Source: RMDB library RSTRND, as collected in RNAgym. This 207-nucleotide RNA was probed chemically with 2A3. The 2A3 profile rests on 465 reads. Conditions: 150 mM KOAc, 10 mM MgCl2 and 150 mM bicine (pH 8.5), 24 C. For 2A3 the reverse transcriptase was SuperScript II with manganese.
RNA sequence: GGGAACGACUCGAGUAGAGUCGAAAACUGUUUACUUGGUUGCUGAUCACCUACAGUUGGUCAACUAAGUUGAAGCGUCCGCAUGUAGGAUCGCCACAAGGGAUUGUCUCAAUCCUUUGGGUUCAAAAGUAGAGACUCGGCUAAUCCAUCCUGACUGGUCUUUUAAGAGCUUCGGCUCUUAAAAGACAAAAGAAACAACAACAACAAC
Reactivity to 2A3 in 0.01 (KOAc 150mM, MgCl2 10mM, bicine 150mM(pH8.5), 24C), signal-to-noise 1, nucleotides 027 to 156: c030u060g000u050u220u130a020c000u020u030g010g010u000u030g040c020u020g050a070u090c090a120c110c030u070a060c040a070g020u100u040g040g030u150c040a030a000c040u120a060a100g090u050u100g070a130a020g010c040g080u040c030c050g070c220a130u100g050u060a060g000g010a070u090c050g000c010c010a120c000a050a010g050g000g000a070u050u120g170u070c070u000c070a010a000u010c000c000u000u000u000g010g000g020u070u000c020a070a000a030a000g030u060a010g030a000g020a080c040u000c040g000g040c020u010a060a040u110c010c020a050u060c040c000u050g010a030c060u040g000